[RMDB]
This 177-nucleotide RNA was probed chemically with DMS and 2A3. 2A3 adducts were read by reverse transcription with SuperScript II with manganese. The RNA was probed in 150 mM KOAc, 10 mM MgCl2 and 150 mM bicine (pH 8.5) at 24 C.
RNA sequence: GGGAACGACUCGAGUAGAGUCGAAAAUCAUUUUCAAUAAGGUUUGGCGAUGCGUACUCCGGUGAUAUUGGUGGCAGGUCAGGAUCACACCGACGAGGUGACGGGCGCCUUGUUGCGCCGGACCGGAGAUUCUUAGCCAGUUCGCUGGCUAAGAAUCAAAAGAAACAACAACAACAAC
Reactivity to DMS in 0.01 (KOAc 150mM, MgCl2 10mM, bicine 150mM(pH8.5), 24C), signal-to-noise 3, nucleotides 027 to 126: u030c070a090u030u020u030u000c090a080a100u000a100a140g020g030u010u000u000g010g010c030g000a080u030g000c060g020u010a080c040u020c020c000g000g010u010g020a060u020a080u020u010g000g000u000g010g020c080a060g010g000u000c050a070g020g000a080u020c080a160c040a040c000c020g020a100c190g030a170g000g010u000g000a060c100g000g020g000c000g020c010c070u050u010g010u010u020g010c020g010c020c010g000g010a040c030c010g000g010a120
Reactivity to 2A3 in 0.01 (KOAc 150mM, MgCl2 10mM, bicine 150mM(pH8.5), 24C), signal-to-noise 3, nucleotides 027 to 126: u060c030a050u080u070u130u180c100a110a070u270a130a110g070g030u020u060u070g040g000c030g030a050u070g040c000g060u040a050c030u000c020c000g060g010u050g050a080u020a050u140u080g020g000u030g010g050c070a030g050g030u060c030a030g020g080a080u090c040a020c010a030c080c010g080a080c080g010a020g020g010u030g050a030c050g030g010g000c010g020c030c000u100u150g140u090u080g040c010g000c000c000g000g000a010c010c000g000g000a060